[RMDB]
RNA sequence: GGGAACGACUCGAGUAGAGUCGAAAAGAAUGGAAGCAUACACAGGUUCAGGUGUCUUCGAGAGGGCUGUGGCGGCCCAGCAGCUGGCUUGGUGCUUGCGCCGUGUGGGCUACAGGGGUCUGGGGUCCUCCAUGCUACCAUUCGUGGUAGCAUGGAGAAAAGAAACAACAACAACAAC
Reactivity to 2A3 in 0.01 (KOAc 150mM, MgCl2 10mM, bicine 150mM(pH8.5), 24C), signal-to-noise 1, nucleotides 027 to 126: g070a040a050u090g060g030a080a010g010c000a020u070a100c030a000c020a080g050g030u160u160c040a030g100g080u060g020u030c060u120u080c090g120a110g030a050g050g020g000c030u040g020u060g250g040c050g000g000c030c000c000a010g040c020a000g010c000u020g050g030c000u040u090g140g020u110g020c020u040u060g060c010g000c030c020g020u050g050u020g000g030g000c040u050a040c030a060g000g050g000g100u000c110u070g000g000g000g010u080c010
Reactivity to DMS in 0.01 (KOAc 150mM, MgCl2 10mM, bicine 150mM(pH8.5), 24C), signal-to-noise 2, nucleotides 027 to 126: g020a180a100u020g000g000a100a060g030c110a050u000a080c040a070c040a080g010g000u000u000c080a070g000g010u010g000u020c030u010u010c160g000a070g020a050g020g000g000c050u000g000u010g010g010c130g010g000c000c010c020a130g000c040a010g010c010u000g000g010c030u000u010g020g040u000g000c010u000u000g000c090g020c030c030g010u000g000u000g020g000g020c030u000a070c080a080g000g000g010g000u020c090u010g000g000g000g000u010c040
Structure probing data (2A3 and DMS) for a 177-nucleotide construct. 2A3 adducts were read by reverse transcription with SuperScript II with manganese. For 2A3, 1,144 sequencing reads were counted.